[RMDB]
Structure probing data (2A3 and DMS) for a 177-nucleotide construct. For 2A3 the reverse transcriptase was SuperScript II with manganese. The data come from the RNA Mapping Database (RMDB), library OK2TRN. Conditions: 150 mM KOAc, 10 mM MgCl2 and 150 mM bicine (pH 8.5), 24 C. For DMS, 1,514 sequencing reads were counted.
RNA sequence: GGGAACGACUCGAGUAGAGUCGAAAACUUGGUUUGGGGCAAUUUCCUGAAAAUAAUAUCCAAGAUGCAAAGCAUAUGGCUCUGGUGAGACGUGUGAGGAGCUGAGAAUGAGACGGCUGAGUGUCGGCCCUCACAUGGUAUUCGUACCAUGUGAGGGAAAAGAAACAACAACAACAAC
Reactivity to 2A3 in 0.01 (KOAc 150mM, MgCl2 10mM, bicine 150mM(pH8.5), 24C), signal-to-noise 1, nucleotides 027 to 126: c000u030u060g030g000u130u080u040g050g000g010g080c030a050a120u020u090u070c010c000u060g040a060a030a040a060u250a000a110u060a010u080c010c040a030a000g000a010u060g000c010a000a040a140g070c020a050u040a060u110g050g000c000u000c030u080g060g000u140g040a090g010a000c070g020u010g050u030g090a050g000g020a000g000c010u040g040a030g080a140a140u120g000a040g010a070c020g000g070c060u110g020a040g090u090g060u100c060g020g060
Reactivity to DMS in 0.01 (KOAc 150mM, MgCl2 10mM, bicine 150mM(pH8.5), 24C), signal-to-noise 2, nucleotides 027 to 126: c100u000u010g010g000u000u000u010g010g010g000g010c120a070a060u010u010u000c030c000u010g010a070a050a100a080u000a060a070u010a080u010c030c030a050a070g010a100u000g010c050a080a090a140g010c020a040u000a110u000g000g000c020u010c060u000g020g000u000g000a110g030a030c060g000u000g000u000g020a090g000g010a170g000c030u000g010a080g000a060a060u000g000a230g010a080c080g010g010c070u000g020a080g000u000g030u000c030g030g010